This 177-nucleotide RNA was probed chemically with DMS.

RNA sequence: GGGAACGACUCGAGUAGAGUCGAAAAAGCCACCAUAUUGUUGAGCAUUGGAAAGCAGAACGCCUUACCGCUAUUGGCAGUGCACCUUUGUCCAUUUGGUUUGUCAUUCAAAUGUUAAGACUAGCUGAAGUUGCACACAGUUCGCUGUGUGCAACUUAAAAGAAACAACAACAACAAC
Reactivity to DMS in 0.01 (KOAc 150mM, MgCl2 10mM, bicine 150mM(pH8.5), 24C), signal-to-noise 2, nucleotides 027 to 126: a090g000c050c040a140c060c030a120u020a020u000u000g000u000u000g010a080g000c060a050u000u010g020g000a090a060a120g020c070a060g000a110a140c090g000c020c010u000u000a060c090c080g040c110u010a100u000u020g020g010c030a060g000u010g030c060a070c060c020u010u000u010g010u000c030c020a060u010u000u000g000g000u000u000u010g020u010c130a120u010u010c080a020a050a060u000g000u010u010a060a100g010a050c050u010a100g040c100u010g000